The record gives the reactivity of an RNA of 207 nucleotides to DMS and 2A3.
RNA sequence: GGGAACGACUCGAGUAGAGUCGAAAAUCGCAUGUUCGCAUGCGAAAAAAGCGUACUACAUCGAGGUAUGAAAUGCGAUAAGUCCCAAAUAGGACUUUUGACGCAUAUGUAGUACUCCCCACCGAUGUAUCGCAAAAAAUACCUGUUCGCAGGUAAAAUCUAUAACCAUCUUCGGAUGGUUAUAGAUAAAAGAAACAACAACAACAAC
Reactivity to DMS in 0.01 (KOAc 150mM, MgCl2 10mM, bicine 150mM(pH8.5), 24C), signal-to-noise 3, nucleotides 027 to 156: u000c000g000c000a030u000g000u000u000c300g020c010a050u000g100c000g030a000a020a030a090a080a090g030c060g020u010a080c100u000a010c000a010u000c070g000a250g020g020u000a080u000g020a110a100a050u000g000c010g020a210u000a010a020g030u000c000c010c020a070a200a180u000a060g010g000a020c000u010u000u000u010g010a220c030g020c010a040u000a040u000g000u000a200g010u000a030c020u010c150c080c030c060a300c150c010g020a060u000g000u000a040u000c030g030c010a000a030a080a070a110a120u000a020c010c000u000g000u000u000c280g060c030a030g040g000u010a030a010a070
Reactivity to 2A3 in 0.01 (KOAc 150mM, MgCl2 10mM, bicine 150mM(pH8.5), 24C), signal-to-noise 4, nucleotides 027 to 156: u010c000g010c020a000u040g020u090u080c190g050c110a000u010g020c000g000a120a020a000a000a000a010g070c060g010u070a070c050u000a000c010a000u010c040g050a030g060g020u030a010u040g060a060a050a030u000g000c000g010a010u010a070a020g000u020c020c020c040a110a190a050u260a060g000g000a000c000u040u030u070u200g180a130c030g000c020a000u040a090u130g000u000a020g000u010a020c030u110c080c060c000c000a020c010c030g000a010u020g030u040a070u300c070g000c040a020a110a030a000a000a070u090a020c010c000u020g020u020u090c230g000c080a000g000g010u060a040a000a000
Source: RMDB library RNAMAK, as collected in RNAgym. The RNA was probed in 150 mM KOAc, 10 mM MgCl2 and 150 mM bicine (pH 8.5) at 24 C. For 2A3, 3,257 sequencing reads were counted. High DMS reactivity at an A or C suggests that its Watson-Crick edge is free.